[RMDB]
RNA sequence: GGGAACGACUCGAGUAGAGUCGAAAACUUUGUUGGUGCUUUUAAGAAGCGAGUCAACUUUAAAACACUUUACAGUGACAUGGUGCAAAACGCCAAGUAUGGUAAUGAUUAUCUCGAAGCGGGUUACACGGGUAAUCAGUUUCGACUGAUUACCCGUAAAAGAAACAACAACAACAAC
Reactivity to DMS in 0.01 (KOAc 150mM, MgCl2 10mM, bicine 150mM(pH8.5), 24C), signal-to-noise 1, nucleotides 027 to 126: c050u000u000u000g000u000u010g040g030u020g010c060u000u000u000u010a100a090g000a100a070g070c020g010a080g010u000c030a030a050c060u010u000u030a020a010a040a110c030a010c050u000u010u010a090c150a020g000u010g020a070c070a030u030g030g000u000g070c040a060a050a070a190c080g010c010c010a020a020g010u000a050u020g020g000u030a020a110u010g010a140u020u000a030u010c050u000c050g040a070a100g020c060g020g000g060u000u000a060c090

Conditions: 150 mM KOAc, 10 mM MgCl2 and 150 mM bicine (pH 8.5), 24 C. This 177-nucleotide RNA was probed chemically with DMS.